[RMDB]
About this RNA
Structure probing data (2A3 and DMS) for a 177-nucleotide construct. 2A3 adducts were read by reverse transcription with SuperScript II with manganese.
RNA sequence: GGGAACGACUCGAGUAGAGUCGAAAACUGUUUUAUCAGGACCGGCUAAAGAACGUAUCGAAAAUUCUGCUAUAAAAGAAUUAAUCGUAACAAACUCAAUUCAUUUAGAUGAAGAUCGCAAACCAUCUAUCCACGUGUUAUUCGUAACACGUGGAUAAAAAGAAACAACAACAACAAC
Reactivity to 2A3 in 0.01 (KOAc 150mM, MgCl2 10mM, bicine 150mM(pH8.5), 24C), signal-to-noise 7, nucleotides 027 to 126: c020u020g080u040u230u100u160a170u210c020a010g020g040a050c030c000g010g030c050u080a140a010a020g070a150a010c070g040u040a040u200c020g020a070a000a000a050u000u000c000u000g050c060u100a070u140a280a080a070a020g010a020a020u040u040a040a070u010c010g020u050a070a100c040a130a100a020c030u040c060a030a130u080u030c020a040u080u080u180a100g020a060u050g010a040a030g060a110u070c020g010c090a020a090a130c020c020a040u050c020
Reactivity to DMS in 0.01 (KOAc 150mM, MgCl2 10mM, bicine 150mM(pH8.5), 24C), signal-to-noise 3, nucleotides 027 to 126: c000u020g020u010u020u020u010a030u060c030a050g000g020a110c020c000g000g010c020u020a020a120a050g020a110a060c120g030u000a120u000c000g010a030a060a000a020u010u010c010u000g010c170u050a190u040a040a080a060a050g010a030a020u010u000a070a040u030c040g030u000a170a080c040a040a110a080c030u020c010a040a190u000u000c010a020u010u010u010a050g010a050u040g010a010a070g000a070u010c060g000c040a050a070a210c040c010a070u020c150
For 2A3, 5,968 sequencing reads were counted. Reactivities are given for positions 27 through 126.